Structure probing data (2A3 and DMS) for a 177-nucleotide construct. The RNA was probed in 150 mM KOAc, 10 mM MgCl2 and 150 mM bicine (pH 8.5) at 24 C. For 2A3 the reverse transcriptase was SuperScript II with manganese.

RNA sequence: GGGAACGACUCGAGUAGAGUCGAAAAGCAGGCAACUCGUCAGGCGAUCGACGUUAAUGAAGCAAAUCCAUAAUUGCCAAUGAUGAGCAAUUCGCUAUUGCCGCCUAAAAACGGUUAGCCGGGGCUGAACAGGUUUGGAAUUCGUUCCAAACCUGUUAAAAGAAACAACAACAACAAC
Reactivity to 2A3 in 0.01 (KOAc 150mM, MgCl2 10mM, bicine 150mM(pH8.5), 24C), signal-to-noise 5, nucleotides 027 to 126: g040c030a030g020g030c000a010a020c040u020c140g020u020c030a010g010g020c010g020a060u050c030g100a100c020g040u100u120a100a090u300g070a050a010g020c000a020a010a060u070c060c010a020u060a150a040u060u000g020c010c010a100a140u300g100a090u050g020a050g000c010a000a010u080u100c050g000c050u050a060u050u140g010c000c000g010c000c000u070a090a060a010a000a000c000g030g000u020u000a030g000c000c010g030g000g040g010c030u020g000
Reactivity to DMS in 0.01 (KOAc 150mM, MgCl2 10mM, bicine 150mM(pH8.5), 24C), signal-to-noise 5, nucleotides 027 to 126: g020c040a120g000g000c020a070a060c080u010c020g030u000c030a090g000g000c030g000a040u000c100g010a060c060g000u010u030a090a070u010g000a120a160g010c030a080a120a120u050c110c090a090u020a060a070u000u000g010c000c010a080a110u020g020a100u020g000a120g010c010a020a020u000u030c210g010c090u000a060u040u010g000c010c000g000c000c010u020a040a040a090a120a150c020g000g000u010u000a090g030c030c080g000g000g000g000c120u000g000
DMS adducts were read by reverse transcription with MarathonRT.